[RMDB]
RNA sequence: GGGAACGACUCGAGUAGAGUCGAAAAGGGGACUCCGGGAUGCCUUGCAUGCCGGGGACGAAGCCGCCCCCGGGCGCUCCCCUCGAUCCGCCUUCGGAGGGGUUCACACCUCCAGGCGGCGGGCCGGCACAAGGAAAUAGUUCGCUAUUUCCUUGUGAAAAGAAACAACAACAACAAC
Reactivity to DMS in 0.01 (KOAc 150mM, MgCl2 10mM, bicine 150mM(pH8.5), 24C), signal-to-noise 3, nucleotides 027 to 126: g010g020g000g010a130c020u000c010c000g000g010g010a010u000g000c010c180u010u000g030c020a040u000g000c010c000g000g000g000g000a030c120g020a090a140g010c080c020g010c030c010c020c060c110g030g020g020c030g010c090u000c000c000c000c030u000c030g000a100u000c000c010g000c000c000u000u000c130g010g000a010g010g010g000g020u010u010c220a140c150a150c000c010u010c000c000a050g020g030c060g000g000c020g000g010g010c060c010g000g010
Reactivity to 2A3 in 0.01 (KOAc 150mM, MgCl2 10mM, bicine 150mM(pH8.5), 24C), signal-to-noise 2, nucleotides 027 to 126: g000g000g000g000a010c000u000c000c000g040g030g000a030u010g000c080c190u160u300g040c060a010u070g180c010c000g000g000g000g000a000c020g050a020a040g040c040c010g070c030c010c010c020c030g000g030g020c000g010c020u030c000c000c000c000u000c010g010a060u040c010c000g010c000c010u070u180c070g000g010a000g020g010g010g000u300u260c130a100c040a090c040c000u010c000c000a000g030g000c000g000g000c010g000g000g000c000c040g060g030
The record gives the reactivity of an RNA of 177 nucleotides to DMS and 2A3. The DMS profile rests on 3,664 reads. The data come from the RNA Mapping Database (RMDB), library VIROID. DMS (dimethyl sulfate) methylates the pairing face of unpaired adenines and cytosines. Values cover nucleotides 27 to 126.